[RMDB]
RNA sequence: GGGAACGACUCGAGUAGAGUCGAAAAGUCCUGCUGGCAAGGCUAGACGGCUGCCAAGCAGGGGAUGAAGCUGCAAUUUUACUGGAUGACGUGCUAAUGGCCAGGCAUGACCAUUUCCAACUGGAAGGGAUCAUAUUCUGUUCGCAGAAUAUGAUCCAAAAGAAACAACAACAACAAC
Reactivity to DMS in 0.01 (KOAc 150mM, MgCl2 10mM, bicine 150mM(pH8.5), 24C), signal-to-noise 4, nucleotides 027 to 126: g000u020c000c000u010g030c010u000g000g000c020a060a040g000g010c030u010a080g030a110c210g000g010c010u000g000c020c020a040a050g000c000a030g010g010g010g000a090u040g020a100a110g000c070u010g000c090a070a070u020u030u010u020a150c070u000g020g000a070u020g000a110c080g000u000g010c040u010a060a110u030g000g030c010c040a070g010g020c070a040u000g000a080c070c050a050u010u000u010c040c010a120a040c140u010g010g000a110a140g000
Reactivity to 2A3 in 0.01 (KOAc 150mM, MgCl2 10mM, bicine 150mM(pH8.5), 24C), signal-to-noise 8, nucleotides 027 to 126: g030u050c000c000u000g020c010u010g010g000c050a160a210g080g000c010u030a100g090a210c090g050g000c010u020g000c000c000a020a020g000c000a010g000g000g000g020a060u120g070a060a040g010c030u050g030c080a120a140u030u050u060u170a120c050u060g060g040a050u060g060a040c040g030u040g000c010u060a110a050u090g040g020c030c010a030g040g000c030a060u040g040a060c020c010a040u060u030u000c030c030a100a090c100u090g030g060a060a030g140